[RMDB]
RNA sequence: GGGAACGACUCGAGUAGAGUCGAAAACAACCUAAGUUCGCAGACUCUUAUCACCAAAAGUACAGAAUGGUGUCAGGUACAUCAAGACUAACCGAACAGAAAUCAGCUAUCAUAGUAAGUCAAAUUCCAAAAACAUAAGACAGAAAAGCAAGAACAAGCAUAAUGAUAGUUUCGACUAUCAUUAUGCAAAAGAAACAACAACAACAAC
Reactivity to DMS in 0.01 (KOAc 150mM, MgCl2 10mM, bicine 150mM(pH8.5), 24C), signal-to-noise 3, nucleotides 027 to 156: c050a060a260c000c020u000a080a100g000u000u000c040g050c070a170g020a080c060u030c050u000u010a060u000c050a110c010c020a000a050a110a150g030u010a200c130a140g000a090a200u000g000g060u010g000u000c030a080g000g060u010a100c020a060u010c030a040a080g000a140c040u000a070a120c050c020g030a030a160c090a140g020a060a110a060u000c020a070g000c030u000a050u000c060a110u000a090g040u000a050a080g010u000c040a060a060a150u000u000c070c040a060a100a090a080a080c080a080u000a040a150g000a110c050a100g010a000a040a070a080g010c060a030a110g020a040a050c070a070a250
Reactivity to 2A3 in 0.01 (KOAc 150mM, MgCl2 10mM, bicine 150mM(pH8.5), 24C), signal-to-noise 7, nucleotides 027 to 156: c040a030a070c010c020u080a090a060g020u030u070c040g030c080a020g010a130c030u020c010u130u080a070u120c020a030c030c030a030a030a050a050g070u090a110c050a060g090a150a130u060g020g000u010g030u030c040a040g020g060u060a030c030a050u070c050a080a000g040a060c030u040a060a030c050c030g060a040a020c030a050g070a020a060a030u080c000a010g020c030u060a030u120c030a060u050a090g060u130a110a010g010u020c040a020a030a100u140u030c040c030a060a080a010a030a000c020a070u130a110a000g050a040c040a020g090a040a120a030a000g040c040a040a030g070a060a040c060a110a030